[RMDB]
RNA sequence: GGGAACGACUCGAGUAGAGUCGAAAAGAUAUGGACUGGAACUACAGCGCGCACAUCUGAUGACCUCUCUAGAAGGUCGGAAACGACCUUCUAGAGAGCAAGGAUGGAUCGCUGCCAGUCCUAAGUCGAUGUAUGAACUGUUCGCAGUUCAUACAUCAAAAGAAACAACAACAACAAC
Reactivity to 2A3 in 0.01 (KOAc 150mM, MgCl2 10mM, bicine 150mM(pH8.5), 24C), signal-to-noise 2, nucleotides 027 to 126: g090a040u120a090u240g000g010a000c000u030g020g030a090a060c110u240a120c300a000g030c000g000c050g050c060a080c010a110u000c000u080g110a290u100g020a180c030c010u000c000u010c000u000a000g000a020a010g030g000u000c000g020g020a100a070a030c030g010a000c070c000u010u000c000u000a000g030a000g010a000g000c000a000a010g000g030a000u010g000g000a020u050c000g020c000u020g000c000c000a000g000u000c010c000u010a070a010g030u070c130
Reactivity to DMS in 0.01 (KOAc 150mM, MgCl2 10mM, bicine 150mM(pH8.5), 24C), signal-to-noise 3, nucleotides 027 to 126: g010a060u010a300u000g000g000a040c000u000g030g010a110a040c070u020a300c050a000g010c010g050c190g000c300a240c020a030u000c000u000g000a130u020g010a120c300c010u010c010u000c000u000a000g000a010a000g010g000u000c000g010g000a100a110a210c010g020a020c000c000u000u000c000u010a010g010a000g010a000g010c030a060a120g020g010a000u000g000g000a180u000c000g020c000u000g000c000c000a010g000u000c000c010u000a010a080g010u000c110
The record gives the reactivity of an RNA of 177 nucleotides to 2A3 and DMS. For 2A3, 5,971 sequencing reads were counted. It was measured as part of the RMDB library TTRINS. DMS adducts were read by reverse transcription with MarathonRT.